The data come from the RNA Mapping Database (RMDB), library RFM100.
Chemical mapping of a 177-nucleotide RNA with 2A3.
RNA sequence: GGGAACGACUCGAGUAGAGUCGAAAAUCAAUGGACAUUAUCUGCCAUUAUCAGUCGAAGAUCGAACGUUUAACCAAUAAUGUUCUUCAGAAUAUUUUUAAGCUUUGUUAUGCCACAGUUUACAUGUCCUUGAAAGUCCUUUCGAGGACUUUCAAGGAAAAGAAACAACAACAACAAC
Reactivity to 2A3 in 0.01 (KOAc 150mM, MgCl2 10mM, bicine 150mM(pH8.5), 24C), signal-to-noise 1, nucleotides 027 to 126: u010c020a000a020u000g010g020a000c030a000u000u140a020u040c080u130g000c000c000a000u030u030a080u040c000a050g100u000c000g000a060a020g070a250u130c000g000a010a110c000g000u120u000u000a170a040c300c000a120a090u040a020a000u010g000u000u000c000u030u000c090a060g150a130a050u070a020u210u180u010u010u100a150a060g050c060u130u020u210g020u090u040a020u290g000c000c030a030c010a150g010u040u010u120a140c060a000u090g000u000